The record gives the reactivity of an RNA of 177 nucleotides to DMS. High DMS reactivity at an A or C suggests that its Watson-Crick edge is free. It was measured as part of the RMDB library TTRDES. The RNA was probed in 150 mM KOAc, 10 mM MgCl2 and 150 mM bicine (pH 8.5) at 24 C.

RNA sequence: GGGAACGACUCGAGUAGAGUCGAAAAAGAUAUGGACGUCUGGGAGAGACCUCUAGCGUUUGACGUGCGAUCGGAAACGAUCGCACCGAGCUAGACAUGGUCUCGAAGAACAGACGUCCUAAGUCAACAGAUUCAAUCACUUCGGUGAUUGAAUCUGAAAAGAAACAACAACAACAAC
Reactivity to DMS in 0.01 (KOAc 150mM, MgCl2 10mM, bicine 150mM(pH8.5), 24C), signal-to-noise 1, nucleotides 027 to 126: a080g000a040u000a300u000g010g010a010c010g000u000c000u000g000g000g030a230g010a050g000a010c000c010u000c000u000a020g010c000g050u010u000u020g000a120c300g020u000g000c000g000a010u010c010g020g020a160a030a180c020g000a010u000c000g000c020a000c000c000g010a060g030c020u000a000g000a080c300a200u010g000g000u000c010u000c000g000a090a130g000a140a220c030a000g030a010c010g040u010c000c050u000a020a090g020u000c080a080a300